[RMDB]
RNA sequence: GGGAACGACUCGAGUAGAGUCGAAAAACAUUUAGGGACAAAUGGUGGUGGUUUCUUAGGUGCGAACUCUUCUACACCUUUUGAAAAUCCGACAUACUGGUCUAAUUACGCUGAAGCUUUAAGUAUGGAGUUGCAGGAUGUUCGCAUCCUGCAACUCAAAAGAAACAACAACAACAAC
Reactivity to 2A3 in 0.01 (KOAc 150mM, MgCl2 10mM, bicine 150mM(pH8.5), 24C), signal-to-noise 1, nucleotides 027 to 126: a000c150a040u150u080u120a120g020g010g020a000c030a030a100a090u040g020g010u020g060g000u090g000g010u040u000u050c010u080u050a070g000g050u070g000c060g050a090a070c000u000c050u240u000c070u050a030c050a000c040c000u070u020u070u070g090a020a050a000a000u000c050c030g000a000c000a000u060a060c000u030g000g000u030c000u040a070a010u090u080a010c150g020c150u120g010a080a010g000c030u070u000u060a020a000g030u000a100u230g050
An RNA of 177 nucleotides, treated with 2A3 and read out base by base. The reactions ran in a buffer of 150 mM KOAc, 10 mM MgCl2 and 150 mM bicine (pH 8.5), at 24 C.